[RMDB]
RNA sequence: GGGAACGACUCGAGUAGAGUCGAAAAGGAACAUCCUUCGGGAUGUUCCAUAGGCGGGGCCUCUCGCUAAGCGGCGCGCAGAGGCGCGCAGCGCAGCUUGAAAGUAAGCCUAGUUCGCUAGGCUUAACGGUUGGAAUAAAUUCGUUUAUUCCAACCGAAAAGAAACAACAACAACAAC
Reactivity to 2A3 in 0.01 (KOAc 150mM, MgCl2 10mM, bicine 150mM(pH8.5), 24C), signal-to-noise 5, nucleotides 027 to 126: g000g000a000a000c030a000u010c010c020u070u090c230g040g000g000a000u000g000u000u000c000c000a000u010a010g040g000c050g000g020g050g010c010c030u080c020u010c050g000c000u000a070a020g020c010g030g000c020g000c010g000c050a040g050a090g300g070c010g000c000g000c010a010g030c020g000c000a020g010c030u040u140g070a110a060a040g080u100a020a000g000c000c000u010a010g010u020u020c070g010c100u000a000g000g000c010u000u010a020a010
Reactivity to DMS in 0.01 (KOAc 150mM, MgCl2 10mM, bicine 150mM(pH8.5), 24C), signal-to-noise 7, nucleotides 027 to 126: g000g000a020a010c000a000u000c000c000u000u010c210g040g010g000a010u000g010u000u000c000c000a040u000a040g020g000c060g010g000g010g020c080c110u000c010u000c050g020c010u000a050a200g010c020g000g010c030g020c020g010c030a170g010a120g010g010c010g030c010g010c010a020g010c010g020c200a040g010c040u000u000g010a080a090a110g000u000a010a010g000c000c000u000a000g010u000u010c220g020c000u000a000g000g000c000u000u000a000a070
Record summary: An RNA of 177 nucleotides, treated with 2A3 and DMS and read out base by base. High DMS reactivity at an A or C suggests that its Watson-Crick edge is free. The DMS profile rests on 12,689 reads.